RNA sequence: GGGAACGACUCGAGUAGAGUCGAAAAGCCGAGAAGUUCGCUUCUCGGCGAAGGCCUGUUUUUCUCGCUGACUUUCAGCCCCAAACAAAAAAUGUCAGCAAAAUCCGGAACGGUUCGCCGUUCCGAAACCAUUUGAUACUUUCGAGUAUCAAAUGGUAAAAGAAACAACAACAACAAC
Reactivity to 2A3 in 0.01 (KOAc 150mM, MgCl2 10mM, bicine 150mM(pH8.5), 24C), signal-to-noise 5, nucleotides 027 to 126: g000c000c000g010a010g000a000a000g020u070u280c210g020c130u000u010c000u010c000g000g000c000g000a010a000g030g030c030c010u000g000u010u000u000u000u010c070u020c050g010c010u000g000a000c000u010u020u010c010a000g000c000c010c010c010a160a270a170c050a040a040a020a000a000a010u070g010u010c000a000g010c030a040a030a010a020u050c040c000g000g000a000a000c000g030g030u040u050c180g010c050c000g000u000u000c000c000g000a010a000
Reactivity to DMS in 0.01 (KOAc 150mM, MgCl2 10mM, bicine 150mM(pH8.5), 24C), signal-to-noise 5, nucleotides 027 to 126: g010c000c000g010a000g010a020a000g010u000u020c210g020c010u000u000c000u000c010g020g000c000g000a020a080g000g000c230c000u000g000u010u000u000u010u000c060u000c200g000c010u000g000a020c000u000u000u000c010a010g000c040c000c010c020a090a110a160c130a000a010a010a010a010a010u020g010u000c000a000g010c010a100a070a070a080u000c110c000g010g000a010a010c000g000g000u000u010c240g010c010c000g000u000u000c000c000g000a010a060
Background: Chemical mapping of a 177-nucleotide RNA with 2A3 and DMS. DMS adducts were read by reverse transcription with MarathonRT. 2A3 is a SHAPE reagent: it acylates the 2'-hydroxyl of flexible nucleotides of all four kinds. 2A3 adducts were read by reverse transcription with SuperScript II with manganese. The reactions ran in a buffer of 150 mM KOAc, 10 mM MgCl2 and 150 mM bicine (pH 8.5), at 24 C.